[RMDB]
RNA sequence: GGGAACGACUCGAGUAGAGUCGAAAAGCAGGAGUGUUCGCACUCCUGCAAAUGAAAGCGGCCAGCUCCAGGGCGCCAAACAAUAUGGAGCACAAAGUAAAGAAAGGCCUACGUUCGCGUAGGCCAACAUAGUAUCGACGUUCGCGUCGAUACUAUGAAAAGAAACAACAACAACAAC
Reactivity to DMS in 0.01 (KOAc 150mM, MgCl2 10mM, bicine 150mM(pH8.5), 24C), signal-to-noise 2, nucleotides 027 to 126: g000c020a000g020g000a010g010u000g000u010u020c300g010c030a010c000u000c010c010u010g010c010a000a010a080u010g000a090a120a130g020c020g020g020c000c000a050g000c000u000c000c000a010g000g000g020c020g000c040c170a030a060a040c190a010a030u010a090u000g000g000a000g020c000a180c300a070a070a060g010u030a090a130a070g000a110a130a070g000g010c000c020u000a000c000g010u000u020c210g010c010g020u000a030g000g020c020c000a000a010
Reactivity to 2A3 in 0.01 (KOAc 150mM, MgCl2 10mM, bicine 150mM(pH8.5), 24C), signal-to-noise 3, nucleotides 027 to 126: g000c010a000g020g020a000g010u030g030u060u180c180g080c080a000c000u000c000c020u010g000c000a010a010a000u110g020a000a060a000g020c020g090g070c010c000a020g010c000u000c000c010a000g000g000g000c040g060c200c200a100a120a020c050a070a010u010a030u070g010g000a000g170c000a000c000a010a050a010g190u250a100a050a020g110a100a140a040g020g000c000c000u000a010c020g000u030u050c180g000c000g070u010a000g000g010c000c000a000a000